Source information
This 177-nucleotide RNA was probed chemically with 2A3 and DMS. 2A3 adducts were read by reverse transcription with SuperScript II with manganese. The data come from the RNA Mapping Database (RMDB), library RFM100. DMS adducts were read by reverse transcription with MarathonRT.
[RMDB]
RNA sequence: GGGAACGACUCGAGUAGAGUCGAAAACGCUUAAAAAUGCUCGCGGAACUGAUGCAGUGGGAGGCGACCGAUUGAAGCCAAUUGCAGACAUCAUGUGUGACUGAGUAUUGGUGUAGGCGAUAGCCUAUAUCGUGCCGGUUUUCGAACCGGCACGAUAAAAAGAAACAACAACAACAAC
Reactivity to 2A3 in 0.01 (KOAc 150mM, MgCl2 10mM, bicine 150mM(pH8.5), 24C), signal-to-noise 1, nucleotides 027 to 126: c010g000c000u010u020a000a000a100a000a010u040g000c020u020c000g070c020g120g000a090a000c000u020g040a010u020g030c060a020g000u040g000g000g000a000g010g040c090g060a000c010c000g160a090u070u280g050a050a000g000c000c000a030a000u000u000g030c060a030g100a150c010a030u000c090a100u170g090u020g080u040g060a060c000u080g090a000g030u010a020u030u040g030g000u160g040u000a000g000g000c000g010a030u090a000g040c000c000u000a000
Reactivity to DMS in 0.01 (KOAc 150mM, MgCl2 10mM, bicine 150mM(pH8.5), 24C), signal-to-noise 1, nucleotides 027 to 126: c100g040c110u000u000a000a060a080a110a050u000g060c000u000c000g000c090g070g030a100a210c020u000g000a000u000g040c080a070g100u000g000g020g080a300g000g000c060g000a080c160c220g010a090u050u000g000a150a300g000c020c090a000a090u090u000g010c000a080g020a230c000a000u000c010a080u090g020u000g020u050g000a050c070u000g000a110g100u000a010u000u000g060g000u060g040u010a000g000g000c000g000a170u000a000g020c000c000u000a110